Chemical mapping of a 207-nucleotide RNA with 2A3.
RNA sequence: GGGAACGACUCGAGUAGAGUCGAAAAUGCUGCCAACGACCCUGUGGCUGUGUGUCUUGCCAAACACGGGAUGAUCCGCUCCACCGGCAAAGCGGGCGAACUCUUUAUUGAAUGCCCCUUUGAAGAACGCCAUACGCAAGCCUCUAGCCCCACAUCCCCGUCCUACUUGCUUCGGCAAGUAGGACGGAAAAGAAACAACAACAACAAC
Reactivity to 2A3 in 0.01 (KOAc 150mM, MgCl2 10mM, bicine 150mM(pH8.5), 24C), signal-to-noise 1, nucleotides 027 to 156: u030g020c000u060g060c100c030a060a040c030g060a050c030c000c040u090g040u020g030g000c000u030g030u010g010u010g030u080c060u100u120g020c040c040a120a150a030c060a060c100g000g010g060a120u080g000a000u030c030c010g020c050u000c010c010a040c040c020g000g040c000a020a020a020g150c290g020g000g020c000g050a170a100c020u050c040u040u150u190a240u160u300g100a080a030u230g020c000c000c000c000u010u010u010g080a080a060g020a050a000c010g020c020c050a090u100a110c050g030c010a000a110g000c030c010u030c010u020a030g000c000c000c050c000a070c000a050u050c000c000

Reactivities are given for positions 27 through 156.
It was measured as part of the RMDB library OK3TST.
For 2A3 the reverse transcriptase was SuperScript II with manganese.
For 2A3, 541 sequencing reads were counted.
Conditions: 150 mM KOAc, 10 mM MgCl2 and 150 mM bicine (pH 8.5), 24 C.